Chemical mapping of a 207-nucleotide RNA with 2A3.
Reactivities are given for positions 27 through 156.
The reactions ran in a buffer of 150 mM KOAc, 10 mM MgCl2 and 150 mM bicine (pH 8.5), at 24 C.
RNA sequence: GGGAACGACUCGAGUAGAGUCGAAAAACUAAUCAGGAUAGUUUGUCAGUAGCGUGUCCAUCCGCAGCUGGCCGGCGAAUGUAAUGAUUGGACUAAGCAUGUAGUGCCGACGGUGUAGUAAUUUCGGACGGGGGUUCAAAUCCCCCCAGCUCCACCACCCAUUCCAUAAGUUCGCUUAUGGAAUGGGAAAAGAAACAACAACAACAAC
Reactivity to 2A3 in 0.01 (KOAc 150mM, MgCl2 10mM, bicine 150mM(pH8.5), 24C), signal-to-noise 1, nucleotides 027 to 156: a000c090u130a090a100u120c030a030g080g040a110u030a120g030u020u000u010g010u020c010a000g020u030a000g060c000g000u020g010u080c020c060a050u050c030c000g000c010a030g000c000u010g020g000c000c010g040g000c050g030a110a040u090g010u200a040a070u030g050a000u010u170g030g010a000c030u030a020a030g000c020a010u080g040u190a040g090u070g090c000c010g000a080c090g000g030u020g000u000a040g010u030a070a300u090u140u110c050g000g000a000c010g030g020g000g000g030u070u000c010a010a100a150u050c000c010c010c000c000c010a000g000c010u030c020c000a020c000c000a000